[RMDB]
RNA sequence: GGGAACGACUCGAGUAGAGUCGAAAAAGCGCGCAAUGUGUACAUGGGUAUUCCCCCAUAUCUGUGUACUACAGCCGAGAGGACUUGUGGGGUGUUGUGUGCAGUGCAAGUGUAUUUGGUGCGCGAAGUGUAUAUAUUUUUUCGAAAAUAUAUACACAAAAGAAACAACAACAACAAC
Reactivity to 2A3 in 0.01 (KOAc 150mM, MgCl2 10mM, bicine 150mM(pH8.5), 24C), signal-to-noise 6, nucleotides 027 to 126: a000g030c010g000c000g000c020a020a080u070g010u000g000u020a000c000a000u000g010g000g000u010a010u060u180c000c000c000c000c000a000u000a000u000c000u010g010u000g000u000a000c010u090a010c010a010g020c000c010g020a020g020a020g050g040a010c010u030u020g010u050g020g050g020g020u080g050u110u150g050u020g040u060g020c050a030g050u020g050c000a000a020g000u040g040u080a080u040u060u060g020g000u050g000c010g000c000g020a080a010
Reactivity to DMS in 0.01 (KOAc 150mM, MgCl2 10mM, bicine 150mM(pH8.5), 24C), signal-to-noise 6, nucleotides 027 to 126: a100g010c010g000c010g040c010a090a060u020g020u000g010u000a010c000a000u000g000g010g000u000a010u010u020c040c000c000c010c050a300u000a000u000c000u000g010u000g000u000a010c010u040a020c010a120g010c010c010g010a080g020a120g010g010a030c010u010u000g020u000g000g010g010g020u010g000u000u010g010u010g020u020g010c050a090g020u010g000c030a020a040g020u010g020u030a060u010u000u010g000g010u010g010c010g000c010g010a050a100